[RMDB]
RNA sequence: GGGAACGACUCGAGUAGAGUCGAAAAGGAAGCCAGAAGAUGGGAGAGACAUUUUUGAAGGAACAAGCUGCCAAUAAUGUCUGCAAAAAGUGAAUUCUUCCAACAACUACGUGAGCUUGGAAGAGGACCUUGAACCUAGAAUGAGACUGCAGCAGCAAUGAGUGGUACUAUUCGUAGUACCACUCAUAAAAGAAACAACAACAACAAC
Reactivity to DMS in 0.01 (KOAc 150mM, MgCl2 10mM, bicine 150mM(pH8.5), 24C), signal-to-noise 4, nucleotides 027 to 156: g010g020a100a070g030c030c010a050g020a060a050g010a070u000g010g000g000a090g000a150g020a070c050a050u000u010u000u020u000g020a130a110g010g020a070a100c060a060a170g040c040u010g020c030c030a090a120u000a070a050u000g010u000c010u010g040c060a050a090a090a030a060g020u010g020a060a280u010u000c000u000u010c010c000a010a040c030a050a230c040u000a070c220g020u000g000a120g010c120u000u000g010g010a040a030g000a050g030g000a280c100c000u000u000g000a040a090c040c060u000a070g000a110a100u010g000a100g000a030c050u000g010c040a050g020c010a060g020c020a180
Reactivity to 2A3 in 0.01 (KOAc 150mM, MgCl2 10mM, bicine 150mM(pH8.5), 24C), signal-to-noise 5, nucleotides 027 to 156: g020g010a040a000g030c040c030a010g020a040a020g040a060u060g010g020g010a050g010a020g010a020c030a040u040u040u040u070u080g090a090a050g030g010a090a040c040a110a040g020c010u020g020c020c030a030a010u090a100a040u090g030u040c010u050g060c080a050a070a030a030a000g110u140g070a010a030u040u010c000u000u000c010c000a000a000c010a020a050c030u270a040c110g160u130g070a020g040c060u010u010g010g000a000a000g010a010g000g020a010c010c000u030u070g030a030a040c000c020u050a120g060a140a100u090g010a030g020a020c030u040g020c050a020g000c000a000g020c020a030

Chemical mapping of a 207-nucleotide RNA with DMS and 2A3. High DMS reactivity at an A or C suggests that its Watson-Crick edge is free. DMS adducts were read by reverse transcription with MarathonRT. The RNA was probed in 150 mM KOAc, 10 mM MgCl2 and 150 mM bicine (pH 8.5) at 24 C. For 2A3, 4,179 sequencing reads were counted.